The data come from the RNA Mapping Database (RMDB), library M2RFPK. An RNA of 207 nucleotides, treated with 2A3 and read out base by base. Conditions: 150 mM KOAc, 10 mM MgCl2 and 150 mM bicine (pH 8.5), 24 C.
RNA sequence: GGGAACGACUCGAGUAGAGUCGAAAAAGCCAUACCAUUACGAUGGUAUGGCAAGUCCGUGACGGCGAUGAAUCCCGCCUGGCCGAUGCCGAACUGCCGAUCUGGCUGAUGGUUCCUGCCCCGUCAAAAAACGUAAAGCACUUCGGUGCUUUACGAAGGUAAAUUCUCACUUCGGUGAGAAUUUACCAAAAGAAACAACAACAACAAC
Reactivity to 2A3 in 0.01 (KOAc 150mM, MgCl2 10mM, bicine 150mM(pH8.5), 24C), signal-to-noise 1, nucleotides 027 to 156: a000g040c020c000a010u010a000c020c000a000u110u040a020c160g100a020u000g000g010u000a000u000g000g000c010a000a000g020u000c000c000g020u010g010a050c030g000g000c050g090a120u080g060a030a110u060c000c000c000g050c020c020u000g020g020c000c030g050a060u150g110c030c000g060a090a040c100u070g000c020c020g030a140u100c070u100g010g000c000u040g010a110u120g020g020u020u040c050c030u030g030c050c010c000c010g030u040c050a010a080a000a000a030a110c010g000u000a000a000a000g020c000a000c010u040u070c240g080g000u000g000c000u000u000u010a000c010g000a000a000